Conditions: 150 mM KOAc, 10 mM MgCl2 and 150 mM bicine (pH 8.5), 24 C. Chemical mapping of a 207-nucleotide RNA with DMS and 2A3. 2A3 adducts were read by reverse transcription with SuperScript II with manganese. Reactivities are given for positions 27 through 156. It was measured as part of the RMDB library PDB130.
[RMDB]
RNA sequence: GGGAACGACUCGAGUAGAGUCGAAAAGCUAUCGGGCCCAUACCCCGAAAAUGUUGGUUCAUACCCUUCCCAUACUAAUUAAUCCCAUUAUCUACACUACCCUUAUCAUAACAGUAAUGUCCGGAACCAUACUAGUAAUAAUCAGCUCACACUGACUACUUGAAACCUUGUUCGCAAGGUUUCAAGUAAAAGAAACAACAACAACAAC
Reactivity to DMS in 0.01 (KOAc 150mM, MgCl2 10mM, bicine 150mM(pH8.5), 24C), signal-to-noise 1, nucleotides 027 to 156: g040c020u000a170u020c050g000g050g070c060c000c250a160u010a170c300c000c000c010g000a090a030a090a090u000g010u010u000g000g030u000u160c040a120u000a160c010c030c020u000u000c030c000c000a180u010a290c110u000a030a040u020u000a100a150u000c030c010c000a160u000u000a070u000c040u000a020c030a040c030u000a020c020c000c020u000u030a050u000c050a090u010a050a220c040a040g010u000a060a070u040g000u000c110c050g030g000a080a150c000c020a170u000a080c040u000a070g020u010a040a150u090a040a100u000c000a030g000c000u000c080a090c090a080c010u000g000a060c000u000
Reactivity to 2A3 in 0.01 (KOAc 150mM, MgCl2 10mM, bicine 150mM(pH8.5), 24C), signal-to-noise 3, nucleotides 027 to 156: g040c000u000a010u060c020g020g020g030c010c050c020a080u130a030c010c010c000c010g030a050a040a080a080u150g010u040u050g010g000u060u030c020a050u140a160c000c000c000u000u010c050c010c000a020u060a000c080u060a040a130u230u060a040a080u070c000c020c010a030u140u070a060u090c030u050a010c020a020c040u060a060c050c010c000u060u090a040u080c020a030u050a160a040c010a010g050u100a040a070u070g060u040c060c030g050g030a030a030c020c000a010u050a110c040u030a030g070u050a010a060u050a090a080u130c010a000g020c010u070c040a030c010a000c040u040g060a030c050u020